[RMDB]
RNA sequence: GGGAACGACUCGAGUAGAGUCGAAAAUCUUUUAUGGCAUCUACAAGAAACUUUAAGGAGCUGCUCAGUUGUUAAUUCCUGUCUUGAACAUGUAGUAGAAUAUUGUCCACUGGAAAAUAGUGGCUGCCCAGAAAGACGCUUGGAAGAAAUAGCAUUAAUCCAUUAAUAGCUUCGGCUAUUAAUGGAUAAAAGAAACAACAACAACAAC
Reactivity to DMS in 0.01 (KOAc 150mM, MgCl2 10mM, bicine 150mM(pH8.5), 24C), signal-to-noise 1, nucleotides 027 to 156: u000c040u000u000u000u010a150u000g000g000c000a080u000c020u000a140c060a100a190g000a110a150a110c010u000u000u000a070a200g070g000a060g000c000u010g000c070u010c020a140g010u030u000g000u000u000a100a100u010u000c000c010u030g000u000c040u000u000g000a070a080c030a060u000g020u010a060g020u020a070g000a050a080u000a110u020u000g000u010c000c000a100c050u000g050g000a090a110a080a180u000a050g000u000g020g030c090u030g010c000c000c050a200g000a070a030a150g010a040c040g020c070u020u010g010g060a190a090g000a060a060a100u000a080g050c040a150u010u000a050
Reactivity to 2A3 in 0.01 (KOAc 150mM, MgCl2 10mM, bicine 150mM(pH8.5), 24C), signal-to-noise 1, nucleotides 027 to 156: u020c010u030u140u030u030a150u140g050g000c040a040u000c050u110a000c050a090a060g060a150a220a090c040u120u120u200a120a190g050g010a050g020c020u040g020c040u070c110a040g000u090u080g010u040u080a030a080u070u040c010c040u010g110u180c020u030u010g020a100a060c010a020u070g020u050a050g050u010a040g110a050a130u060a060u090u110g020u050c010c000a020c020u040g120g000a200a130a040a000u070a080g080u020g020g060c020u060g020c010c010c010a080g050a010a040a010g020a010c090g060c050u000u170g020g020a050a030g150a140a100a000u260a070g010c040a000u190u190a070
The record gives the reactivity of an RNA of 207 nucleotides to DMS and 2A3. Conditions: 150 mM KOAc, 10 mM MgCl2 and 150 mM bicine (pH 8.5), 24 C. It was measured as part of the RMDB library OK3TST.